An RNA of 177 nucleotides, treated with DMS and 2A3 and read out base by base.
RNA sequence: GGGAACGACUCGAGUAGAGUCGAAAAUGUUGAUUGUCAGAAUUUGCAAUGUGUGGCUUCACUAGCCAGUGAAUAAUCAGCGCUAUCAACCAGCAUCUUUGGACUGUUUACUAGGAAUAUAAUGAUGCCGUUGGAUUACUUUCGAGUAAUCCAACGGAAAAGAAACAACAACAACAAC
Reactivity to DMS in 0.01 (KOAc 150mM, MgCl2 10mM, bicine 150mM(pH8.5), 24C), signal-to-noise 2, nucleotides 027 to 126: u010g000u020u010g010a060u010u000g030u040c070a160g030a180a060u010u000u010g000c130a070a070u000g000u000g050u000g020g010c020u000u000c180a070c210u010a160g030c060c060a050g010u000g010a070a110u000a110a050u000c030a120g010c090g010c070u000a080u000c070a060a080c050c060a050g000c050a010u000c010u000u000u000g020g000a200c020u000g000u010u010u000a090c100u000a060g020g000a080a110u030a110u000a030a040u020g010a050u010g000
Reactivity to 2A3 in 0.01 (KOAc 150mM, MgCl2 10mM, bicine 150mM(pH8.5), 24C), signal-to-noise 1, nucleotides 027 to 126: u040g010u000u050g030a170u010u020g040u040c010a040g060a110a210u030u060u180g000c070a060a020u080g160u000g070u050g080g000c000u110u050c050a010c110u050a020g070c040c000a040g030u080g080a080a000u050a100a000u000c020a000g000c000g000c010u010a020u120c030a030a140c010c000a000g000c000a070u030c010u000u160u070g010g060a080c030u060g020u190u130u110a090c100u150a150g000g170a110a020u240a000u030a200a140u090g040a030u070g020
Description
The RNA was probed in 150 mM KOAc, 10 mM MgCl2 and 150 mM bicine (pH 8.5) at 24 C. The 2A3 profile rests on 625 reads.